[RMDB]
RNA sequence: GGGAACGACUCGAGUAGAGUCGAAAAGAUAUGGAGCGACAGUUGAGACGUUGUCGGAAACGACAAUACGUCAAUGAUGCUGCGCUCCUAAGUCAAAAGCAAACGAUCGCUUCGGCGAUCGUUUGCAGUAUAGUUUACCGUUCGCGGUAAACUAUACAAAAGAAACAACAACAACAAC
Reactivity to DMS in 0.01 (KOAc 150mM, MgCl2 10mM, bicine 150mM(pH8.5), 24C), signal-to-noise 5, nucleotides 027 to 126: g000a020u000a080u010g000g010a020g020c010g010a180c010a010g010u000u000g000a060g010a020c000g010u000u000g000u000c000g020g010a020a020a040c000g010a020c000a010a060u000a110c110g020u000c000a280a230u010g000a120u000g000c000u000g000c000g010c000u000c000c000u000a000a050g000u000c010a140a080a130a150g010c010a000a000a010c000g000a010u000c010g020c000u000u010c250g030g020c000g020a000u000c000g000u000u000u000g010c000a040
Reactivity to 2A3 in 0.01 (KOAc 150mM, MgCl2 10mM, bicine 150mM(pH8.5), 24C), signal-to-noise 3, nucleotides 027 to 126: g010a000u010a010u080g000g000a000g000c000g300a300c030a020g020u030u080g120a040g010a030c030g010u000u000g010u000c000g000g000a010a000a000c000g020a010c000a020a060u260a230c020g000u000c000a090a300u100g010a010u020g000c000u000g000c000g010c000u000c000c000u000a010a000g010u000c010a010a040a090a120g000c000a000a020a000c010g010a010u010c010g010c040u120u180c300g160g000c000g000a020u010c000g000u000u000u000g000c010a000
An RNA of 177 nucleotides, treated with DMS and 2A3 and read out base by base. Source: RMDB library TTRDES, as collected in RNAgym.